Conditions: 150 mM KOAc, 10 mM MgCl2 and 150 mM bicine (pH 8.5), 24 C. Chemical mapping of a 207-nucleotide RNA with DMS and 2A3. DMS adducts were read by reverse transcription with MarathonRT. Reactivities are rounded to 0.1 and cut off at 0 and 3. It was measured as part of the RMDB library OK3TST.
[RMDB]
RNA sequence: GGGAACGACUCGAGUAGAGUCGAAAAGAAAGCAUGUGACAAGAUGAGACGAUUUGUCUUCAACGAGGAGCUUCCUUCCAUACUCACAAAAAGAUGUGUGUCUUAACAUAGUAAGGACAUGGUUAAAUUUAGUCUUAUUUGGACCUAACUUCAGCCAUAACUACCUCUAUUUCGAUAGAGGUAGUUAAAAAGAAACAACAACAACAAC
Reactivity to DMS in 0.01 (KOAc 150mM, MgCl2 10mM, bicine 150mM(pH8.5), 24C), signal-to-noise 6, nucleotides 027 to 156: g020a060a040a070g020c010a080u000g030u000g030a170c080a060a130g030a140u010g010a070g020a090c050g020a190u000u010u010g010u010c020u020u000c060a100a100c060g010a190g020g000a140g010c040u000u000c020c020u010u000c020c020a060u010a030c040u010c040a080c070a050a110a090a160a110g010a060u000g030u010g020u000g010u000c040u010u000a080a100c080a100u010a110g010u020a070a130g010g010a080c090a070u000g020g010u000u000a020a040a050u000u000u010a060g010u000c010u000u000a190u010u000u000g020g010a050c030c020u010a020a020c060u000u000c040a040g020c000c020a120
Reactivity to 2A3 in 0.01 (KOAc 150mM, MgCl2 10mM, bicine 150mM(pH8.5), 24C), signal-to-noise 9, nucleotides 027 to 156: g070a020a050a000g040c050a040u090g020u070g110a050c050a080a050g050a100u100g010a030g010a050c080g130a220u060u090u230g020u010c000u070u040c060a090a060c050g050a060g040g020a030g020c030u060u030c000c010u070u000c020c010a030u080a110c020u050c050a030c030a040a080a040a020a050g090a130u070g050u020g010u010g020u030c020u070u070a110a060c050a120u140a090g080u090a100a060g000g020a010c020a060u040g040g000u030u090a060a060a060u080u080u070a020g000u000c010u050u150a190u130u100u100g050g010a030c020c030u020a040a060c030u070u050c030a020g050c010c090a020

2A3 adducts were read by reverse transcription with SuperScript II with manganese.